[RMDB]
The record gives the reactivity of an RNA of 177 nucleotides to 2A3 and DMS. It was measured as part of the RMDB library M2PK50. For 2A3 the reverse transcriptase was SuperScript II with manganese. The RNA was probed in 150 mM KOAc, 10 mM MgCl2 and 150 mM bicine (pH 8.5) at 24 C. For DMS, 5,345 sequencing reads were counted. The 2A3 profile rests on 2,643 reads.
RNA sequence: GGGAACGACUCGAGUAGAGUCGAAAAAUGGUGACCUUCGGGUCACCAUGGUGCGUAGCUGCGUUAAUUUAAUAGCUACGCUUAAUAAAUUUAAUUAAGGCAAUGGAGCCUGCUUCGGCAGGCUCAACAUAUGUCCUCUGUUCGCAGAGGACAUAUGAAAAGAAACAACAACAACAAC
Reactivity to 2A3 in 0.01 (KOAc 150mM, MgCl2 10mM, bicine 150mM(pH8.5), 24C), signal-to-noise 3, nucleotides 027 to 126: a010u020g030g000u010g000a000c010c010u020u030c270g080g010g010u000c010a010c010c000a000u010g010g040u080g000c010g000u010a000g010c010u050g050c050g090u040u080a150a130u240u140u180a100a120u200a030g020c010u010a000c000g000c000u010u050a020a000u060a050a050a030u200u190u130a090a110u140u130a130a030g080g000c030a030a080u110g080g000a000g000c000c000u010g000c010u010u060c090g060g000c060a000g020g000c000u000c000a000a030
Reactivity to DMS in 0.01 (KOAc 150mM, MgCl2 10mM, bicine 150mM(pH8.5), 24C), signal-to-noise 4, nucleotides 027 to 126: a000u000g000g020u000g010a010c000c010u000u010c200g040g030g020u000c010a000c000c000a000u000g000g010u010g010c000g010u000a000g010c000u000g000c260g010u010u010a050a080u010u000u010a090a110u010a040g000c000u000a000c000g010c000u000u010a020a060u010a060a060a120u010u010u010a050a110u010u010a070a080g000g010c100a110a090u010g010g010a020g020c010c000u000g010c000u000u010c190g010g010c000a010g000g010c000u000c000a010a060